[RMDB]
RNA sequence: GGGAACGACUCGAGUAGAGUCGAAAAGGGCUUGACGCAUCGCCCGAAUACGAUGCAUGUGCUUUUGCACUAAGAUAAAUGUCCGUAUUGUAGGGGACUUAGAACCUACUCAUUAAUGUCCGAAGAGUCUGGGACGAUCAUCAGGCUAGACUAAGAAACUAUGGCAUAGCUUCGGCUAUGCCAUAGUAAAAGAAACAACAACAACAAC
Reactivity to 2A3 in 0.01 (KOAc 150mM, MgCl2 10mM, bicine 150mM(pH8.5), 24C), signal-to-noise 3, nucleotides 027 to 156: g010g000g020c020u030u050g060a030c050g040c010a040u040c000g040c020c000c000g000a040a020u080a010c020g000a020u030g020c020a100u100g010u000g020c040u160u090u240u300g010c040a000c010u060a100a070g030a140u200a090a180a110u180g030u010c010c000g030u050a030u040u060g010u030a030g000g000g000g040a000c000u020u090a020g010a080a000c000c000u010a010c000u020c030a020u100u220a150a070u120g050u050c030c040g070a110a020g040a010g090u000c000u060g010g000g090a080c060g020a110u130c070a020u010c010a010g030g040c010u020a010g000a030c010u030a040a020g040a040a150
Reactivity to DMS in 0.01 (KOAc 150mM, MgCl2 10mM, bicine 150mM(pH8.5), 24C), signal-to-noise 2, nucleotides 027 to 156: g010g000g060c000u000u000g020a110c070g050c030a050u000c000g030c000c040c090g000a150a120u010a030c000g030a040u010g040c080a280u000g010u000g010c000u000u010u000u010g030c010a040c020u000a100a090g010a170u000a050a150a100u000g010u000c040c030g040u030a090u000u010g000u010a070g050g020g000g020a140c080u000u000a080g000a090a130c050c000u010a060c060u000c040a150u000u000a100a090u000g000u000c020c050g000a090a130g010a060g020u000c010u000g020g030g000a090c030g000a070u000c040a060u000c010a050g000g000c030u000a140g000a130c090u000a030a050g010a180a160
The data come from the RNA Mapping Database (RMDB), library OK3TST. An RNA of 207 nucleotides, treated with 2A3 and DMS and read out base by base. For DMS the reverse transcriptase was MarathonRT. The 2A3 profile rests on 1,325 reads.